Structure probing data (2A3 and DMS) for a 177-nucleotide construct. The DMS profile rests on 4,382 reads. Source: RMDB library OK2TRN, as collected in RNAgym. 2A3 adducts were read by reverse transcription with SuperScript II with manganese. The reactions ran in a buffer of 150 mM KOAc, 10 mM MgCl2 and 150 mM bicine (pH 8.5), at 24 C.
RNA sequence: GGGAACGACUCGAGUAGAGUCGAAAAGGUGAUGACGCUGACCCGCCCUGAUGCCGACGUUUCUGUCGAAAAGGUAGCCUGAUAUGCACGCUUAUCUUCACUGUCUUUCCCACUCGCCGCUGGUGGGCGUAACGUCAGUUUUCGAACUGACGUUACGAAAAGAAACAACAACAACAAC
Reactivity to 2A3 in 0.01 (KOAc 150mM, MgCl2 10mM, bicine 150mM(pH8.5), 24C), signal-to-noise 4, nucleotides 027 to 126: g020g000u020g010a110u100g040a020c050g000c070u020g090a100c000c010c000g030c010c010c000u060g030a070u110g090c050c020g050a040c030g050u070u150u130c110u180g030u020c030g030a080a030a010a060g030g030u020a040g000c000c010u030g050a060u050a040u240g040c030a030c080g020c040u120u100a070u090c000u030u030c040a030c090u030g050u010c070u030u060u020c000c010c010a020c000u020c030g080c030c010g120c210u160g000g000u020g020g020g020
Reactivity to DMS in 0.01 (KOAc 150mM, MgCl2 10mM, bicine 150mM(pH8.5), 24C), signal-to-noise 3, nucleotides 027 to 126: g000g000u010g000a070u010g010a070c130g020c040u000g000a100c070c020c020g010c050c030c020u010g000a130u000g020c100c010g010a050c070g020u000u010u000c080u010g010u010c040g000a070a080a090a060g010g010u010a060g010c040c040u020g000a080u010a050u010g000c020a050c090g000c050u010u000a070u000c040u010u000c070a060c040u000g000u010c060u010u000u010c000c000c010a200c080u010c050g040c010c060g000c080u010g010g030u010g000g000g000